[RMDB]
RNA sequence: GGGAACGACUCGAGUAGAGUCGAAAAUGGAAGCUUCUCCAAACCGAUGCUUUAUCAAUCAUCAGUAUCAUGGCAUACUCUUCUUCAGGUAGCAGAGAUAACAGACCUAGAUAAGUAUCAAUUGGACACAUGAGACGAUGUUCGCAUCGUCUCAUGUAAAAGAAACAACAACAACAAC
Reactivity to DMS in 0.01 (KOAc 150mM, MgCl2 10mM, bicine 150mM(pH8.5), 24C), signal-to-noise 2, nucleotides 027 to 126: u010g020g010a120a070g020c090u000u000c100u000c030c050a010a140a190c150c120g020a030u000g000c080u000u000u020a030u010c040a080a060u000c130a050u010c050a100g030u010a050u000c060a080u000g000g010c080a060u000a080c020u010c050u000u010c120u000u000c090a050g000g030u000a060g000c070a070g000a070g010a040u000a040a100c080a080g000a050c090c050u000a130g000a020u000a060a030g010u000a000u000c020a050a120u000u000g000g020a130c300
Reactivity to 2A3 in 0.01 (KOAc 150mM, MgCl2 10mM, bicine 150mM(pH8.5), 24C), signal-to-noise 2, nucleotides 027 to 126: u070g030g020a050a030g080c090u160u040c010u060c030c020a060a080a100c070c060g010a040u020g010c010u070u140u180a060u130c080a100a060u040c050a020u020c060a030g030u030a020u080c020a060u050g080g000c040a030u060a090c020u000c030u210u060c010u180u110c080a070g000g090u040a010g040c050a020g040a000g010a090u050a020a070c030a070g030a060c020c000u040a040g000a050u040a050a020g020u010a030u060c070a020a060u070u060g040g000a030c030